[RMDB]
The record gives the reactivity of an RNA of 177 nucleotides to 2A3 and DMS. For DMS, 820 sequencing reads were counted. DMS adducts were read by reverse transcription with MarathonRT.
RNA sequence: GGGAACGACUCGAGUAGAGUCGAAAAACUAGGAGCGCACAUCUCUCUAAGACUGUACGACAGUCUGUCUCUCUAGCACGCUUGUACAACGAGAGAGAGAGAGCGUUGGAACAAGUGUGCAACGAAACUUCGGACAUAGGUUCGCCUAUGUCCGAAGAAAAGAAACAACAACAACAAC
Reactivity to 2A3 in 0.01 (KOAc 150mM, MgCl2 10mM, bicine 150mM(pH8.5), 24C), signal-to-noise 2, nucleotides 027 to 126: a000c070u100a050g040g000a020g070c040g040c070a020c020a170u040c020u010c000u000c000u020a060a010g010a010c000u050g080u110a060c080g080a040c060a010g010u020c000u030g000u000c110u000c020u000c040u040a020g000c000a000c000g010c020u020u040g020u020a020c010a000a000c010g010a010g000a030g000a000g000a000g000a020g030a300g060c010g000u000u020g020g030a100a010c000a000a010g000u000g000u000g000c000a020a000c050g040a080a040a030
Reactivity to DMS in 0.01 (KOAc 150mM, MgCl2 10mM, bicine 150mM(pH8.5), 24C), signal-to-noise 1, nucleotides 027 to 126: a040c130u010a050g010g000a090g010c050g020c070a050c060a120u000c040u010c030u000c030u010a100a050g010a030c010u000g000u000a030c090g010a300c300a020g020u000c040u000g000u000c050u000c000u000c030u020a200g000c050a000c030g030c050u010u000g000u000a030c010a000a010c100g000a030g000a120g000a090g000a050g000a030g000a110g010c080g010u000u000g000g010a050a010c050a000a020g040u000g030u000g030c020a040a070c230g000a050a090a100
Description: For 2A3, 2,493 sequencing reads were counted.